Structure probing data (2A3 and DMS) for a 177-nucleotide construct.
[RMDB]
RNA sequence: GGGAACGACUCGAGUAGAGUCGAAAAAUCAACGAAUUCGUCGGCGAACCUGUAACGCUGAUCGUGCUCGAUCUGCGAGCCGCCGAACAUCUCGUGUUCGAUCCGGCGAUGACCGGUCACGACAUUGCCGGCAUAUAUGAUUCGUCAUAUAUGCCGGAAAAGAAACAACAACAACAAC
Reactivity to 2A3 in 0.01 (KOAc 150mM, MgCl2 10mM, bicine 150mM(pH8.5), 24C), signal-to-noise 9, nucleotides 027 to 126: a000u110c050a030a030c030g080a040a090u120u060c030g010u000c000g010g010c050g040a100a140c010c040u110g100u150a120a030c020g000c030u050g010a020u020c010g050u150g140c170u130c110g010a030u010c020u060g020c010g040a030g010c010c010g000c010c010g010a010a020c020a040u080c080u030c080g060u050g040u080u050c030g010a070u050c030c010g000g010c060g160a170u200g070a140c010c010g020g010u030c040a030c060g060a020c040a090u050u240g060
Reactivity to DMS in 0.01 (KOAc 150mM, MgCl2 10mM, bicine 150mM(pH8.5), 24C), signal-to-noise 7, nucleotides 027 to 126: a070u040c100a090a070c080g010a060a130u010u010c070g000u010c010g000g010c020g020a100a090c110c070u010g000u030a060a270c030g020c020u000g010a020u000c000g020u030g000c280u030c000g010a020u000c010u000g000c030g010a130g020c020c010g010c070c000g000a030a030c080a080u000c130u010c050g010u010g000u010u000c050g010a080u020c100c000g000g000c020g010a130u040g000a110c040c000g010g000u000c050a080c100g010a050c090a100u030u030g020
The reactions ran in a buffer of 150 mM KOAc, 10 mM MgCl2 and 150 mM bicine (pH 8.5), at 24 C. The DMS profile rests on 21,256 reads. For DMS the reverse transcriptase was MarathonRT. It was measured as part of the RMDB library OK1LIB.